RNA sequence: GGGAACGACUCGAGUAGAGUCGAAAAGAGACGCCCAAGAUUAGGACAGGAUAUAUCGAACCAAGGUAUAUCCCCAUGUAACUUUCUGAUAAUUCAGGAUACGUUGUAUAGUGCUAAAACCGAGACGCUUACCCUCGAGUUUCGACUCGAGGGUAAGAAAAGAAACAACAACAACAAC
Reactivity to 2A3 in 0.01 (KOAc 150mM, MgCl2 10mM, bicine 150mM(pH8.5), 24C), signal-to-noise 2, nucleotides 027 to 126: g130a030g010a020c050g030c010c020c000a000a070g090a050u050u140a010g030g000a030c050a100g000g010a000u000a020u040a000u000c020g000a110a130c000c080a140a020g000g000u000a000u000a000u010c000c000c000c000a000u060g070u090a010a000c020u010u030u040c000u020g020a040u090a300a140u240u000c020a000g000g040a030u040a070c100g000u000u030g000u040a070u140a090g090u120g080c080u050a070a030a040a040c020c070g030a050g040a020c030g000
Reactivity to DMS in 0.01 (KOAc 150mM, MgCl2 10mM, bicine 150mM(pH8.5), 24C), signal-to-noise 1, nucleotides 027 to 126: g000a110g000a050c290g030c000c010c020a120a130g000a130u000u050a080g000g020a000c020a190g040g010a000u000a000u000a010u010c000g000a160a200c220c200a120a060g000g010u000a000u000a010u000c000c000c060c140a020u010g010u000a010a040c030u000u040u020c010u010g000a000u010a050a210u010u030c000a130g000g000a120u000a120c150g040u000u000g030u040a050u010a200g000u000g000c000u020a040a020a140a080c100c050g000a050g000a050c160g000